[RMDB]
RNA sequence: GGGAACGACUCGAGUAGAGUCGAAAAAAAACACAUUUAAAAUCACUAUUUGGUGAUAGGUUUGUGUAUGCAGAUGGUUGCAGGCCAGAUGAAUUAUCCGCUAGAGUAAGAUUAGUUAGCAGUGAAACGUACUGUAUGGGUUCGCCCAUACAGUACGAAAAGAAACAACAACAACAAC
Reactivity to DMS in 0.01 (KOAc 150mM, MgCl2 10mM, bicine 150mM(pH8.5), 24C), signal-to-noise 2, nucleotides 027 to 126: a050a020a040a020c020a010c000a000u000u010u010a050a080a110a040u000c010a000c020u000a180u010u010u010g010g040u010g000a020u000a040g030g000u010u000u000g020u000g020u000a050u000g000c090a040g000a090u000g010g000u000u010g030c120a050g010g020c010c030a050g000a050u010g000a120a040u010u010a060u010c010c060g000c040u000a040g010a100g000u000a070a200g020a050u010u010a040g000u010u010a050g000c050a100g000u010g010a070a080a150
Reactivity to 2A3 in 0.01 (KOAc 150mM, MgCl2 10mM, bicine 150mM(pH8.5), 24C), signal-to-noise 1, nucleotides 027 to 126: a000a000a000a000c130a060c020a000u250u220u150a090a250a020a030u050c000a010c000u110a120u300u190u300g000g020u040g000a070u030a020g090g100u050u040u110g040u010g030u040a080u140g060c050a000g010a070u070g030g000u050u090g050c010a030g010g000c000c000a000g000a050u070g000a060a070u130u000a100u110c070c020g040c060u070a020g030a010g200u080a090a030g000a100u080u040a000g090u020u130a040g000c050a020g040u070g100a120a010a000